[RMDB]
RNA sequence: GGGAACGACUCGAGUAGAGUCGAAAAGACGCUGGAAGAGACUUCCGGGUAACCAAGUCAAGGAGAAGGAACGGUAGAAAAGAGCGAGCCUCUCGAUACGAAAGGGCCGCGAGCCUAUCGAGUUUGGACAGCAUAUUCUUCGGAAUAUGCAAAAGAAACAACAACAACAAC
Reactivity to DMS in 0.01 (KOAc 150mM, MgCl2 10mM, bicine 150mM(pH8.5), 24C), signal-to-noise 9, nucleotides 027 to 129: g000a050c090g020c060u010g010g010a060a030g020a110g030a090c060u020u010c100c060g000g000g000u010a080a110c050c050a060a080g010u040c070a060a070g000g000a060g020a060a050g010g000a060a080c090g000g020u040a060g010a040a050a060a040g000a090g000c090g020a060g020c040c010u020c000u020c010g030a070u000a100c150g030a060a060a100g030g000g030c030c030g020c140g010a100g030c020c020u000a040u030c040g000a070g020u000u010u010g000g030a110c180a080
Reactivity to 2A3 in 0.01 (KOAc 150mM, MgCl2 10mM, bicine 150mM(pH8.5), 24C), signal-to-noise 9, nucleotides 027 to 129: g030a000c050g040c100u070g010g030a030a010g060a030g040a100c030u100u000c040c000g000g000g010u040a040a040c030c020a060a020g060u060c030a030a040g040g010a050g010a040a020g040g010a070a010c050g010g010u100a030g080a050a090a030a000g050a010g030c060g020a020g020c020c010u030c000u000c010g040a050u060a160c060g080a140a050a050g020g010g000c010c020g090c080g030a040g000c000c010u020a050u040c020g000a010g020u030u120u120g050g020a020c040a010